[RMDB]
RNA sequence: GGGAACGACUCGAGUAGAGUCGAAAAUGAUCGAGAGAUCUAAAUAUGUACGCGAGUCAAGUGCACAGACUCGAGCGAAAGCUCGGUCGAAAGACCGCGUACAUGCCGCGGCAAGUGUACAGUCGAACCUCCUCGUAUCAUUCGUGAUACGAGGAGGAAAAGAAACAACAACAACAAC
Reactivity to 2A3 in 0.01 (KOAc 150mM, MgCl2 10mM, bicine 150mM(pH8.5), 24C), signal-to-noise 1, nucleotides 027 to 126: u130g000a010u000c010g020a000g000a020g000a130u010c000u020a060a120a000u290a040u020g010u010a000c000g000c010g000a010g010u000c010a110a210g040u030g080c030a020c000a010g000a010c010u030c050g000a000g000c010g090a150a010a000g000c000u000c000g000g000u010c000g000a010a010a000g010a000c000c000g010c000g000u000a000c010a000u010g040c000c020g070c020g030g000c040a190a160g020u000g010u050a020c000a010g010u000c020g040a050a070
Reactivity to DMS in 0.01 (KOAc 150mM, MgCl2 10mM, bicine 150mM(pH8.5), 24C), signal-to-noise 3, nucleotides 027 to 126: u030g020a020u000c000g010a300g010a220g000a000u000c010u000a070a090a100u000a060u000g010u000a000c000g020c000g000a020g010u000c000a010a070g020u030g010c020a030c070a300g000a000c010u000c010g030a000g040c000g010a190a090a160g010c010u000c000g020g000u000c010g040a110a090a190g000a010c000c000g010c000g000u000a010c020a020u000g000c150c090g000c050g000g000c020a020a100g030u000g000u000a030c040a290g000u010c000g010a160a140
Structure probing data (2A3 and DMS) for a 177-nucleotide construct. For DMS, 1,798 sequencing reads were counted. The reactions ran in a buffer of 150 mM KOAc, 10 mM MgCl2 and 150 mM bicine (pH 8.5), at 24 C. Reactivities are rounded to 0.1 and cut off at 0 and 3. The 2A3 profile rests on 2,524 reads. For DMS the reverse transcriptase was MarathonRT. 2A3 adducts were read by reverse transcription with SuperScript II with manganese. Source: RMDB library OK2TRN, as collected in RNAgym.